[RMDB]
RNA sequence: GGGAACGACUCGAGUAGAGUCGAAAAGAUAUGGACAAGCUACCCACCGAGGGAAGACCGUUGAUCUCGGAAACGAGGGAGGUCGCCUCGAGGCUUGUCCUAAGUCAAACUUGCGUUCGCGCAAGAACUCUCAUACAAUCUUCGGAUUGUAUGAGAGAAAAGAAACAACAACAACAAC
Reactivity to 2A3 in 0.01 (KOAc 150mM, MgCl2 10mM, bicine 150mM(pH8.5), 24C), signal-to-noise 4, nucleotides 027 to 126: g080a050u240a170u270g000g000a000c000a010a000g010c010u170a300c010c020c020a000c000c020g000a010g080g040g080a300a300g010a080c010c000g110u240u030g000a010u000c010u000c000g020g000a040a030a030c010g000a000g020g000g010a020g000g000u000c010g110c050c000u010c000g000a010g000g010c000u000u000g000u030c000c000u000a010a000g030u040c130a090a100a200c020u010u010g000c000g040u050u100c290g000c000g000c180a000a000g000a010a010
Reactivity to DMS in 0.01 (KOAc 150mM, MgCl2 10mM, bicine 150mM(pH8.5), 24C), signal-to-noise 4, nucleotides 027 to 126: g010a080u010a220u010g010g010a000c010a000a000g000c010u010a120c020c000c020a300c100c000g010a000g000g000g010a080a120g010a020c010c000g000u010u020g000a030u010c000u000c010g000g010a070a090a180c010g000a020g000g000g010a030g010g000u000c010g000c000c010u000c000g000a050g010g000c000u000u000g010u000c000c000u000a010a070g000u000c140a090a070a150c010u000u000g000c000g040u000u020c230g030c010g000c010a010a020g010a080a140

Record summary
Structure probing data (2A3 and DMS) for a 177-nucleotide construct. For 2A3 the reverse transcriptase was SuperScript II with manganese. Conditions: 150 mM KOAc, 10 mM MgCl2 and 150 mM bicine (pH 8.5), 24 C. Reactivities are given for positions 27 through 126.